[RMDB]
RNA sequence: GGGAACGACUCGAGUAGAGUCGAAAACGAUCAGUUCCCGGUUCACGAAAUAACAGCUCCCGGUUGCCCACGGAUCUCGCACUAGCAAGUUUUGAAGGCCAAACAUUUGCGCAUGGAGAUGCGAGUAAGGUAUAAAAUGAUUCGUCAUUUUAUACCUAAAAGAAACAACAACAACAAC
Reactivity to DMS in 0.01 (KOAc 150mM, MgCl2 10mM, bicine 150mM(pH8.5), 24C), signal-to-noise 9, nucleotides 027 to 126: c100g010a080u010c100a170g000u000u000c010c000c000g020g020u000u010c060a070c080g010a080a090a070u010a070a100c090a100g010c030u000c010c020c020g010g000u000u000g010c020c010c030a120c100g000g010a070u010c010u010c020g020c030a050c060u000a130g010c020a030a040g010u000u000u000u000g010a130a100g020g010c110c040a040a040a050c120a080u000u000u000g010c010g010c130a090u000g010g010a090g010a090u000g010c010g010a060g010u010a080
Reactivity to 2A3 in 0.01 (KOAc 150mM, MgCl2 10mM, bicine 150mM(pH8.5), 24C), signal-to-noise 6, nucleotides 027 to 126: c030g020a090u120c040a030g040u020u040c000c000c000g010g020u130u080c060a050c060g100a080a070a090u140a150a070c040a020g010c020u020c020c000c000g050g010u050u080g030c000c010c000a030c020g040g010a050u040c000u010c020g020c010a010c020u010a030g010c020a060a040g010u010u030u030u090g100a120a040g130g010c030c010a040a030a030c040a080u060u060u100g020c030g000c040a050u070g050g030a100g020a040u030g020c000g010a010g040u040a070
Chemical mapping of a 177-nucleotide RNA with DMS and 2A3. For 2A3 the reverse transcriptase was SuperScript II with manganese. The RNA was probed in 150 mM KOAc, 10 mM MgCl2 and 150 mM bicine (pH 8.5) at 24 C. The data come from the RNA Mapping Database (RMDB), library OK2TST.